Source information
Source: RMDB library OK3TST, as collected in RNAgym. Structure probing data (2A3 and DMS) for a 207-nucleotide construct. Conditions: 150 mM KOAc, 10 mM MgCl2 and 150 mM bicine (pH 8.5), 24 C. For 2A3, 851 sequencing reads were counted. Reactivities are rounded to 0.1 and cut off at 0 and 3.

RNA sequence: GGGAACGACUCGAGUAGAGUCGAAAAACAGAAAGUAUGAGGACACCUUGCACAUAGUGAGGCAGGCGUGGCUCUGGGAUACUUAGCUCAGUAUUUUGGAAUUAGGUGGCAGGGAAGUAUGUGUUAGUUAUUGGCAUCUGUGCUACUAAAUUUUGAAAAAAUAUAGCCCAUUCGUGGGCUAUAUUUUAAAAGAAACAACAACAACAAC
Reactivity to 2A3 in 0.01 (KOAc 150mM, MgCl2 10mM, bicine 150mM(pH8.5), 24C), signal-to-noise 2, nucleotides 027 to 156: a010c040a010g080a000a050a000g070u050a040u200g010a010g030g040a020c000a020c000c000u010u020g050c000a060c010a060u110a010g060u040g090a060g030g000c000a020g000g060c090g020u010g010g000c060u030c020u020g020g000g010a000u030a110c010u060u030a040g030c010u020c080a000g000u020a050u010u050u050u030g000g030a020a020u040u000a040g040g000u000g020g000c020a000g000g050g000a020a000g070u120a010u110g050u030g010u010u020a060g050u050u140a140u080u050g060g000c020a040u030c060u050g040u050g060c000u000a020c000u040a020a270a030u070u050u050u070g300a030a050
Reactivity to DMS in 0.01 (KOAc 150mM, MgCl2 10mM, bicine 150mM(pH8.5), 24C), signal-to-noise 2, nucleotides 027 to 156: a130c030a120g010a090a080a120g010u010a060u010g010a120g000g010a090c040a030c010c010u000u010g010c000a110c060a130u000a140g030u010g000a120g020g030c040a080g020g020c060g050u000g020g000c040u000c040u000g060g010g000a080u010a020c020u010u000a110g010c080u000c100a100g010u000a070u000u000u000u000g010g020a060a090u000u000a080g010g020u000g020g040c010a100g010g010g010a050a080g020u000a040u020g010u000g010u010u010a090g040u010u000a090u010u010g020g020c020a050u000c060u000g010u000g010c000u000a190c040u000a040a050a230u000u000u000u000g010a000a040